[RMDB]
RNA sequence: GGGAACGACUCGAGUAGAGUCGAAAAUCAGCUAAACUUUUACAGGAUCGCGCUUUUCGUCCCGCCCGCUGGGCUGUAAAGCGUUAAAUCAAUAAGCGGUUCUAAGCAUGUAGAGCUGACGGCGGAGUACUGACGGACGGGGGUUCAAAUCCCCCCGCUCAACAAUAUUCUUCGGAAUAUUGUUGAGAAAAGAAACAACAACAACAAC
Reactivity to 2A3 in 0.01 (KOAc 150mM, MgCl2 10mM, bicine 150mM(pH8.5), 24C), signal-to-noise 3, nucleotides 027 to 156: u040c000a000g030c030u090a110a120a130c050u110u140u200u240a080c070a060g030g020a060u030c000g000c000g010c040u030u000u020u030c030g020u040c010c010c020g030c020c020c020g070c070u080g000g000g000c010u030g000u050a040a020a010g010c000g020u030u070a040a090a020u130c050a030a080u120a140a010g000c000g000g030u020u010c050u080a040a070g050c060a050u100g040u140a030g040a010g100c020u020g000a020c020g020g020c000g000g020a040g000u100a060c050u070g060a030c040g030g000a000c010g000g000g000g010g030u030u130c070a060a050a160u070c010c020c010c020c000c010g000
Reactivity to DMS in 0.01 (KOAc 150mM, MgCl2 10mM, bicine 150mM(pH8.5), 24C), signal-to-noise 1, nucleotides 027 to 156: u010c070a090g000c040u010a090a110a070c000u010u010u000u000a080c040a120g000g000a040u010c050g010c030g030c030u000u000u000u000c040g010u000c010c000c020g040c100c000c080g010c070u010g000g010g050c000u020g020u000a020a010a040g000c020g000u010u020a060a050a180u010c080a080a110u010a040a140g030c020g020g000u000u010c040u000a090a180g050c090a120u000g020u000a120g000a120g020c030u000g010a110c000g000g000c010g020g000a180g050u000a070c040u020g030a080c080g010g010a070c080g000g000g020g000g000u000u010c040a020a140a100u000c010c000c000c000c010c010g000

This 207-nucleotide RNA was probed chemically with 2A3 and DMS. It was measured as part of the RMDB library ARCHII. For 2A3, 1,570 sequencing reads were counted. For 2A3 the reverse transcriptase was SuperScript II with manganese. In probing experiments dimethyl sulfate is read out at A N1 and C N3, which are open when not base-paired.